Structure probing data (2A3) for a 207-nucleotide construct. For 2A3 the reverse transcriptase was SuperScript II with manganese. For 2A3, 1,527 sequencing reads were counted. The data come from the RNA Mapping Database (RMDB), library OK3TST. High 2A3 reactivity points to a flexible backbone, as in loops and unpaired stretches. Values are in units of 0.01, from 0 to 300, in steps of 10.

[RMDB]
RNA sequence: GGGAACGACUCGAGUAGAGUCGAAAAUUGGGCGAGCUCAUGUGCGUCGACGCACUUGACCGCGAUGAGUCCUGUGGUGCCCACUUCCGUGACGAUCACCUCUCCGAAGAGGGCGAGGCAGAGCGUGACGACGACAACUGGUGCUUCGUUUCCGCAAGGUCAUAAUUAAUUUCGAUUAAUUAUGACCAAAAGAAACAACAACAACAAC
Reactivity to 2A3 in 0.01 (KOAc 150mM, MgCl2 10mM, bicine 150mM(pH8.5), 24C), signal-to-noise 3, nucleotides 027 to 156: u050u030g000g020g010c030g000a020g000c010u000c000a000u020g010u050g100c150g020u100c100g090a110c100g050c050a050c030u020u110g000a010c010c020g000c020g010a010u030g000a000g040u110c030c050u150g040u120g110g110u110g000c020c040c030a030c030u120u080c050c030g010u020g110a010c050g000a010u010c030a010c040c000u000c000u000c010c000g060a170a090g100a130g120g020g020c070g010a000g010g050c100a100g000a000g010c020g020u050g050a000c030g010a010c010g020a000c000a050a000c040u070g050g020u050g060c050u060u090c050g000u010u020u000c020c020g010c110a130a030